Annotation:
The record gives the reactivity of an RNA of 177 nucleotides to 2A3 and DMS.

RNA sequence: GGGAACGACUCGAGUAGAGUCGAAAAGAAAGAAAGAAAGACCAGUCACGUCCCCUUAUCACUUUUCCAGCCCAGCUUUGUGACUGUAAGUGUUGGACGGAGAACUGAUAAGGGUAGGUGAUUGAAACAAUAGUAUAAUCUUCGGAUUAUACUAUUGAAAAGAAACAACAACAACAAC
Reactivity to 2A3 in 0.01 (KOAc 150mM, MgCl2 10mM, bicine 150mM(pH8.5), 24C), signal-to-noise 9, nucleotides 027 to 126: g100a010a050a010g130a040a070a010g120a050a090a010g070a060c060c010a000g000u000c000a000c010g300u040c000c000c000c000u000u000a000u000c000a010c010u020u000u010u000c010c010a030g020c030c000c000a010g010c030u070u100u100g160u170g180a200c120u120g080u160a030a020g020u040g100u250u060g040g010a020c010g000g000a000g000a000a010c010u000g000a000u000a000a000g000g000g000u000a000g010g010u000g000a000u010u030g000a020a050a000
Reactivity to DMS in 0.01 (KOAc 150mM, MgCl2 10mM, bicine 150mM(pH8.5), 24C), signal-to-noise 9, nucleotides 027 to 126: g010a090a080a090g000a080a070a080g010a080a090a090g000a130c190c010a020g000u000c000a000c000g010u000c150c000c010c000u000u000a000u000c000a010c130u000u000u000u000c010c000a140g020c060c000c010a020g010c010u000u010u010g010u030g010a150c210u030g000u030a020a020g010u000g010u010u000g010g010a250c040g000g000a010g000a010a010c070u000g010a010u000a000a010g010g000g010u000a000g000g020u000g000a010u000u000g000a100a070a140
Source: RMDB libraries RFM100 and RFMREP, as collected in RNAgym. For DMS the reverse transcriptase was MarathonRT. Conditions: 150 mM KOAc, 10 mM MgCl2 and 150 mM bicine (pH 8.5), 24 C.